Structure probing data (DMS and 2A3) for a 177-nucleotide construct.
RNA sequence: GGGAACGACUCGAGUAGAGUCGAAAAUGCAUAAAUACGCGGUUUUCGAAAAAGUAGUCGUUGAGUAUGCGAUGCAUGUACUGAUAGCCUAAAAGUAAAUGAGGGGGUGGAAGGCCGUCGUACGGGGGUUCUCUUUCAGGUUCGCCUGAAAGAGAACAAAAGAAACAACAACAACAAC
Reactivity to DMS in 0.01 (KOAc 150mM, MgCl2 10mM, bicine 150mM(pH8.5), 24C), signal-to-noise 2, nucleotides 027 to 126: u010g000c010a070u000a060a140a070u030a070c040g000c020g020g030u030u000u020u000c020g010a060a160a100a090a200g000u010a030g040u000c030g010u000u030g010a120g030u010a020u000g010c080g000a080u010g010c030a030u010g000u000a000c010u010g000a070u000a070g000c020c010u000a070a090a120a150g020u000a020a060a070u000g010a150g000g020g000g020g020u000g010g000a060a030g000g000c020c020g030u000c050g000u010a010c050g020g000g020g000
Reactivity to 2A3 in 0.01 (KOAc 150mM, MgCl2 10mM, bicine 150mM(pH8.5), 24C), signal-to-noise 1, nucleotides 027 to 126: u060g010c000a000u050a090a140a020u110a060c020g010c010g040g010u020u040u050u110c020g060a110a020a000a000a040g070u090a000g020u000c020g000u000u030g030a010g030u000a050u050g010c000g030a000u070g050c030a020u100g030u050a030c010u000g020a080u070a020g000c000c000u090a080a060a040a010g090u110a020a120a200u200g060a200g000g040g000g030g000u030g000g000a110a000g000g000c000c000g030u040c010g000u010a030c060g020g000g000g060
For 2A3 the reverse transcriptase was SuperScript II with manganese. For DMS, 1,392 sequencing reads were counted. Conditions: 150 mM KOAc, 10 mM MgCl2 and 150 mM bicine (pH 8.5), 24 C.